[RMDB]
RNA sequence: GGGAACGACUCGAGUAGAGUCGAAAACAAACGUCAUCAACAGAAGAUGAGAUCUUUACAGCGGGCAGGCCUUGCUGCAAUGGCCGGUGUCCUUAUAGGAUGAGGAGAUUAGGACACAGACGCAGAGGGCUCGAUCGUGGUUCGCCACGAUCGAGCCAAAAGAAACAACAACAACAAC
Reactivity to 2A3 in 0.01 (KOAc 150mM, MgCl2 10mM, bicine 150mM(pH8.5), 24C), signal-to-noise 1, nucleotides 027 to 126: c140a000a010a080c080g300u000c050a130u000c000a000a300c000a090g290a290a000g000a050u000g000a000g140a010u000c040u000u110u160a100c000a030g000c000g000g030g000c040a000g090g000c000c030u000u030g060c000u000g000c000a000a030u190g000g000c000c060g000g000u000g040u000c000c000u000u000a030u000a030g300g000a300u230g160a000g000g100a040g000a230u000u050a100g000g000a000c080a000c010a040g000a050c200g010c000a000g000a010g180

The record gives the reactivity of an RNA of 177 nucleotides to 2A3. Source: RMDB library OK1LIB, as collected in RNAgym. 2A3 adducts were read by reverse transcription with SuperScript II with manganese. The 2A3 profile rests on 349 reads. The reactions ran in a buffer of 150 mM KOAc, 10 mM MgCl2 and 150 mM bicine (pH 8.5), at 24 C. Values cover nucleotides 27 to 126.